[RMDB]
RNA sequence: GGGAACGACUCGAGUAGAGUCGAAAACUCUCCACGGUGAACGACACAUUCGGGACGCCGCCGGGAGGAUGACUCACCAUGUCCAACAGCGGCACAAUGGUGGGUAUUGCCGUGGGGUCCACAUCAACGGUCACUCACGUUUCGACGUGAGUGACCGAAAAGAAACAACAACAACAAC
Reactivity to 2A3 in 0.01 (KOAc 150mM, MgCl2 10mM, bicine 150mM(pH8.5), 24C), signal-to-noise 1, nucleotides 027 to 126: c000u080c000u000c060c000a000c080g000g000u000g000a030a000c050g190a000c000a000c020a120u250u250c060g020g060g240a060c090g030c050c010g000c040c010g030g090g000a030g020g020a000u000g090a050c000u000c080a030c020c000a130u080g010u030c000c000a030a090c000a280g030c050g070g010c030a020c050a040a150u070g020g010u010g080g020g000u030a190u030u090g000c040c000g010u130g000g000g030g010u160c070c000a260c000a140u130c050a060a230